The data come from the RNA Mapping Database (RMDB), library M2RFOK. An RNA of 207 nucleotides, treated with 2A3 and read out base by base. Values cover nucleotides 27 to 156. The reactions ran in a buffer of 150 mM KOAc, 10 mM MgCl2 and 150 mM bicine (pH 8.5), at 24 C.

RNA sequence: GGGAACGACUCGAGUAGAGUCGAAAACCUCACUACAUUUUACUGUUCCUAAAGAAUUUGUGACAGGUACAGUAAAACGUAUUGCAAGGUUUAUCAGUUCCUAUAAACAGGUAAAUAACAAUAUCUGAAAAGCAAAGACUGUUCGCAGUCUUUGCAAGUGCGUAGGUGUCUUCGGACACCUACGCACAAAAGAAACAACAACAACAAC
Reactivity to 2A3 in 0.01 (KOAc 150mM, MgCl2 10mM, bicine 150mM(pH8.5), 24C), signal-to-noise 1, nucleotides 027 to 156: c000c000u030c000a010c040u000a000c000a030u000u040u000u000a000c000u010g000u060u100c000c000u080a050a090a030g110a300a300u140u300u300g230u150g090a060c140a090g000g000u010a000c000a000g000u020a000a000a000a000c000g010u000a000u040u050g000c150a110a000g030g010u000u000u010a130u080c040a000g040u010u020c000c000u010a100u150a120a060a000c000a000g000g030u010a020a080a030u200a130a080c070a170a130u030a010u030c000u010g020a000a170a000a000g000c000a000a000a000g010a000c000u000g010u060u040c120g060c120a000g000u000c000u000u000u000g010c010a000a000